[RMDB]
Description
Chemical mapping of a 177-nucleotide RNA with DMS and 2A3.

RNA sequence: GGGAACGACUCGAGUAGAGUCGAAAAGAUGGGAACGACUCGAGUAGAGUCGAAAUUAAGAAUCGGAAGCAUGCGAACCGAGACAGACAUGCAAUCGCGAACUAGAGGAGAAACUCCUCUAGAAAUACAUCCCAGGGUAUUUCGAUACCCUGGGAUGAAAAGAAACAACAACAACAAC
Reactivity to DMS in 0.01 (KOAc 150mM, MgCl2 10mM, bicine 150mM(pH8.5), 24C), signal-to-noise 2, nucleotides 027 to 126: g000a050u140g000g010g000a020a120c000g000a000c000u000c000g000a090g040u020a090g000a000g010u000c000g010a030a040a020u000u060a110a040g040a040a040u020c000g020g000a170a070g000c010a020u000g020c050g040a060a110c020c000g060a070g030a040c150a120g000a110c090a060u000g010c050a110a050u040c090g000c060g030a050a160c030u000a090g000a000g000g000a020g000a060a110a170c190u000c000c000u010c000u010a000g000a020a050a090u000a130
Reactivity to 2A3 in 0.01 (KOAc 150mM, MgCl2 10mM, bicine 150mM(pH8.5), 24C), signal-to-noise 2, nucleotides 027 to 126: g140a060u030g020g020g030a130a000c020g000a000c000u000c000g020a010g060u200a010g040a000g000u010c000g000a000a000a000u140u020a050a010g080a010a070u070c000g020g000a040a010g000c000a000u060g010c020g040a060a040c040c050g000a030g020a030c040a000g040a030c020a030u070g050c000a060a120u060c090g000c000g090a030a020c000u000a000g000a000g000g000a000g000a080a100a030c100u020c000c000u020c000u000a000g000a000a000a000u100a000
The data come from the RNA Mapping Database (RMDB), library OK1LIB.